[RMDB]
RNA sequence: GGGAACGACUCGAGUAGAGUCGAAAAAGGGGGCAAGUCGGCACGUAUUCGGACAGACUCAAGCACACACGGGGGAGCGCUCUUGGCUCAGGGCAAUGUUUUUAUUGGUCAAACUCAGGCAAACAGAACUUACGUUUUUAUUCGUAAAAACGUAAGUAAAAGAAACAACAACAACAAC
Reactivity to DMS in 0.01 (KOAc 150mM, MgCl2 10mM, bicine 150mM(pH8.5), 24C), signal-to-noise 9, nucleotides 027 to 126: a080g000g000g000g010g020c060a070a070g010u020c040g000g000c100a060c080g010u020a080u010u020c070g010g000a090c110a080g000a080c090u020c070a070a080g010c090a080c120a060c080a070c060g010g000g010g010g000a070g010c080g010c050u000c040u020u010g000g010c030u010c070a100g010g000g010c040a050a040u010g010u010u020u010u020u020a080u010u010g000g000u010c040a040a070a070c060u000c050a040g000g010c060a060a050a090c150a110g010a110
Reactivity to 2A3 in 0.01 (KOAc 150mM, MgCl2 10mM, bicine 150mM(pH8.5), 24C), signal-to-noise 9, nucleotides 027 to 126: a000g050g000g000g000g010c040a040a030g050u050c010g030g040c030a010c070g060u080a110u060u110c030g040g030a020c020a050g020a050c020u020c100a070a040g050c030a030c010a010c010a020c110g010g000g000g000g040a040g010c030g000c010u020c000u040u070g030g000c000u010c040a020g000g010g000c010a030a060u050g080u010u040u010u050u060a170u050u100g060g010u040c000a020a020a060c040u040c060a020g060g000c030a040a060a030c040a080g070a060
Chemical mapping of a 177-nucleotide RNA with DMS and 2A3.
For DMS, 31,691 sequencing reads were counted.
For 2A3, 21,387 sequencing reads were counted.
DMS adducts were read by reverse transcription with MarathonRT.
It was measured as part of the RMDB library OK1LIB.
In probing experiments dimethyl sulfate is read out at A N1 and C N3, which are open when not base-paired.